[RMDB]
RNA sequence: GGGAACGACUCGAGUAGAGUCGAAAAGAUAUGGAAGCCACAAACACGCGGAGACUAUUCGGAAACGAACGAAUCUCCGAACUACGUGGUAGUGGCUUCCUAAGUCAAAGUGGCCUUCGGGCCACAAGCUUAGUUUUGAGUUCGCUCAAAACUAAGCAAAAGAAACAACAACAACAAC
Reactivity to DMS in 0.01 (KOAc 150mM, MgCl2 10mM, bicine 150mM(pH8.5), 24C), signal-to-noise 3, nucleotides 027 to 126: g000a050u000a300u020g000g010a020a000g000c000c000a010c000a020a060a230c000a000c020g020c000g000g000a030g000a020c040u000a210u000u010c000g010g010a090a130a180c010g010a030a020c160g010a100a090u000c010u000c000c000g030a040a030c110u010a300c000g000u000g000g000u000a200g010u000g000g000c000u000u000c010c000u000a010a030g010u000c020a030a070a080g000u020g010g020c000c000u000u020c080g010g010g030c000c000a000c000a010a090
Reactivity to 2A3 in 0.01 (KOAc 150mM, MgCl2 10mM, bicine 150mM(pH8.5), 24C), signal-to-noise 1, nucleotides 027 to 126: g000a030u040a010u100g000g000a000a000g000c010c000a020c030a020a300a030c030a100c030g000c000g020g010a000g030a020c090u140a100u030u020c010g000g030a110a120a070c030g050a070a000c030g050a060a300u000c000u020c020c000g010a020a020c070u100a050c010g020u020g010g030u000a010g000u010g020g010c000u010u000c000c000u010a000a000g000u010c000a020a000a110g000u010g000g000c000c000u020u020c270g070g000g000c040c000a000c000a010a000